[RMDB]
RNA sequence: GGGAACGACUCGAGUAGAGUCGAAAAGUAUUUAAGUGUCAACAUCGAUUUAUUCAUUUAUUGCUGAGCUGACUGUAACUGACUCAGUAACAAAUCUAAUCAUGUAUUGCACUGGAAAAGAAAUAUUCGAAUCAAAUUAUUUCGAUAAUUUGAUUCGAAAAGAAACAACAACAACAAC
Reactivity to DMS in 0.01 (KOAc 150mM, MgCl2 10mM, bicine 150mM(pH8.5), 24C), signal-to-noise 3, nucleotides 027 to 126: g030u010a030u030u020u020a080a020g000u000g020u010c150a140a030c010a000u000c180g030a020u000u010u000a080u010u020c170a020u010u000u000a050u040u000g000c010u010g000a000g000c030u000g000a200c210u030g040u020a100a100c100u000g000a130c000u000c000a000g010u020a000a010c050a000a010a000u000c190u000a010a000u000c020a010u020g000u000a090u010u000g020c010a000c000u000g010g000a060a110a050a100g000a050a080a100u010a070u000u000
Reactivity to 2A3 in 0.01 (KOAc 150mM, MgCl2 10mM, bicine 150mM(pH8.5), 24C), signal-to-noise 9, nucleotides 027 to 126: g090u060a140u100u120u070a100a010g000u010g110u140c030a010a020c000a020u050c090g020a030u000u060u100a090u130u210c090a020u020u020u050a040u020u030g000c000u000g000a000g000c000u010g140a200c080u210g140u300a090a060c020u010g180a240c000u000c000a010g000u010a000a000c020a000a020a000u010c020u050a000a010u010c010a000u000g010u020a180u030u120g000c010a000c020u020g050g060a070a140a020a030g100a020a090a000u140a070u040u010